[RMDB]
The data come from the RNA Mapping Database (RMDB), library OK1LIB. An RNA of 177 nucleotides, treated with DMS and 2A3 and read out base by base. Values cover nucleotides 27 to 126.
RNA sequence: GGGAACGACUCGAGUAGAGUCGAAAACAUACUAUAGCAAUAACAGUGUUAUCUAUUACAGUAAGGUUAUAUAUUUGACCUGCAAUGCCCAUAACACCUUUUUUAGAGUUGGCAUAAACAUUAUUGAAUCCAUAGUGCUCUUCGGAGCACUAUGGAUAAAAGAAACAACAACAACAAC
Reactivity to DMS in 0.01 (KOAc 150mM, MgCl2 10mM, bicine 150mM(pH8.5), 24C), signal-to-noise 1, nucleotides 027 to 126: c000a150u000a020c050u020a050u040a010g000c100a080a020u020a000a010c150a100g010u000g000u010u000a120u000c090u000a110u000u000a060c140a040g010u030a020a010g000g000u050u000a000u000a120u020a020u020u010u040g040a050c020c000u000g030c130a000a060u000g000c000c000c070a100u010a050a130c070a040c080c010u000u000u000u000u000u000a130g010a120g010u000u000g000g030c060a060u000a040a030a040c150a140u080u000a010u010u050g020a150
Reactivity to 2A3 in 0.01 (KOAc 150mM, MgCl2 10mM, bicine 150mM(pH8.5), 24C), signal-to-noise 1, nucleotides 027 to 126: c000a000u280a000c000u070a020u070a180g000c080a160a110u030a070a000c000a130g020u030g000u200u070a150u050c050u000a050u300u100a000c080a000g050u070a050a050g000g010u000u000a000u000a020u000a000u200u170u230g030a000c000c000u000g000c000a120a230u120g000c000c020c000a130u170a000a000c000a080c000c020u100u280u000u000u000u250a120g000a000g120u000u120g000g000c000a030u070a160a090a090c170a030u040u300a000u200u260g030a050